[RMDB]
RNA sequence: GGGAACGACUCGAGUAGAGUCGAAAAGAAAGAAAUGGAAGGAUUUGAUCAGUCAGGCUUCUGGCUAUAUUCCAGGACUUACCUGGUUCUGGAUAUAACCAAAGCCUGACUAUAUGGUGCUAAAGAAGGUAUACCCUCCUUUCGAGGAGGGUAUACCAAAAGAAACAACAACAACAAC
Reactivity to DMS in 0.01 (KOAc 150mM, MgCl2 10mM, bicine 150mM(pH8.5), 24C), signal-to-noise 1, nucleotides 027 to 126: g020a090a020a100g000a050a070a000u020g000g000a060a050g010g000a100u000u010u020g000a110u010c210a020g000u000c000a010g000g000c000u000u020c150u000g030g080c000u010a000u000a000u000u020c000c020a000g010g000a000c000u000u020a130c300c230u020g020g000u000u000c010u010g010g000a010u010a000u000a010a060c000c000a040a030a000g000c000c000u000g000a000c000u000a000u030a000u000g000g010u000g020c080u000a050a090a110g000a150a120
Reactivity to 2A3 in 0.01 (KOAc 150mM, MgCl2 10mM, bicine 150mM(pH8.5), 24C), signal-to-noise 2, nucleotides 027 to 126: g130a010a130a000g030a010a130a040u150g070g040a020a100g020g050a040u080u060u080g090a080u160c060a030g000u000c010a000g000g000c000u070u040c190u170g000g000c000u000a000u000a000u100u180c000c000a000g000g000a020c000u160u070a220c000c080u150g010g010u000u000c000u000g000g000a000u000a000u000a000a000c010c000a000a030a000g000c000c000u000g000a000c000u000a000u000a000u000g000g010u090g070c040u090a000a000a130g180a090a040